[RMDB]
Source: RMDB library OK2TST, as collected in RNAgym. Chemical mapping of a 177-nucleotide RNA with DMS. Conditions: 150 mM KOAc, 10 mM MgCl2 and 150 mM bicine (pH 8.5), 24 C.

RNA sequence: GGGAACGACUCGAGUAGAGUCGAAAAAGCGGUUUUCCAGAUAUUCACCCGGCGUAUCUAUGGCAUUGUCCUGCCAGAUAAUGGACUGGGUUUUCUGGUAAUUCAGUGCCUCGCCGCGUAAGCGCUGAUUGUAGGGUGACUUCGGUCACCCUACAAUAAAAGAAACAACAACAACAAC
Reactivity to DMS in 0.01 (KOAc 150mM, MgCl2 10mM, bicine 150mM(pH8.5), 24C), signal-to-noise 1, nucleotides 027 to 126: a100g030c020g000g000u010u000u010u000c020c020a000g010a060u000a050u000u020c220a040c040c010c000g020g000c030g020u000a020u010c020u000a160u010g000g000c010a050u000u020g030u000c240c200u000g020c000c010a050g010a010u000a020a050u010g030g010a160c020u000g000g010g020u000u000u000u000c010u000g010g000u010a010a050u000u010c010a030g030u000g000c000c010u000c100g010c040c000g010c040g020u030a110a090g010c030g010c080u000g060